[RMDB]
Source: RMDB library M2RFPK, as collected in RNAgym.
This 207-nucleotide RNA was probed chemically with 2A3 and DMS.
For DMS, 6,319 sequencing reads were counted.
The RNA was probed in 150 mM KOAc, 10 mM MgCl2 and 150 mM bicine (pH 8.5) at 24 C.
Reactivities are given for positions 27 through 156.
DMS adducts were read by reverse transcription with MarathonRT.
2A3 adducts were read by reverse transcription with SuperScript II with manganese.
For 2A3, 11,003 sequencing reads were counted.
RNA sequence: GGGAACGACUCGAGUAGAGUCGAAAAGAGCGAUUAGACAAAGGGGUAGAGCUACAUAUUAGAUAGCUGUAUAAUCGUGCAAGUUACAUCAAAACAUCUUCAAUAUUUAUUACUUACUUUCCUUUCUGCCAGAGUACGGUAUUCGUACCGUACUCAAGAUCUAAGAGUAAUUCGUUACUCUUAGAUCAAAAGAAACAACAACAACAAC
Reactivity to 2A3 in 0.01 (KOAc 150mM, MgCl2 10mM, bicine 150mM(pH8.5), 24C), signal-to-noise 9, nucleotides 027 to 156: g040a000g000c010g010a030u020u050a020g040a090c070a060a110a050g020g020g010g040u060a040g010a010g060c000u020a010c020a070u250a150u200u120a080g160a260u020a010g010c010u000g010u050a030u020a030a030u030c020g000u010g010c020a020a040g030u090u110a070c030a090u150c050a060a110a080a070c020a090u050c050u210u090c060a110a090u070a180u180u180u100a120u110u100a070c020u040u030a030c000u030u070u080c010c000u030u060u080c040u050g070c040c040a040g000a000g000u000a000c000g000g000u010a010u010u040c030g030u010a000c000c000g000u000a000c000u000c000a000a000
Reactivity to DMS in 0.01 (KOAc 150mM, MgCl2 10mM, bicine 150mM(pH8.5), 24C), signal-to-noise 3, nucleotides 027 to 156: g000a200g020c000g000a100u000u000a090g010a070c050a060a080a060g000g010g020g020u000a080g010a040g010c010u000a050c060a080u000a130u000u000a150g010a160u000a030g020c000u010g010u000a070u000a050a040u010c050g030u000g010c080a070a080g000u000u010a060c040a080u010c090a050a110a050a040c050a020u000c030u000u000c060a040a090u010a060u000u010u000a070u020u000a080c040u010u010a070c050u010u000u010c010c020u000u010u010c030u000g030c050c060a110g010a030g010u000a010c030g000g040u000a030u000u000c290g020u000a010c000c000g010u000a010c000u000c000a020a060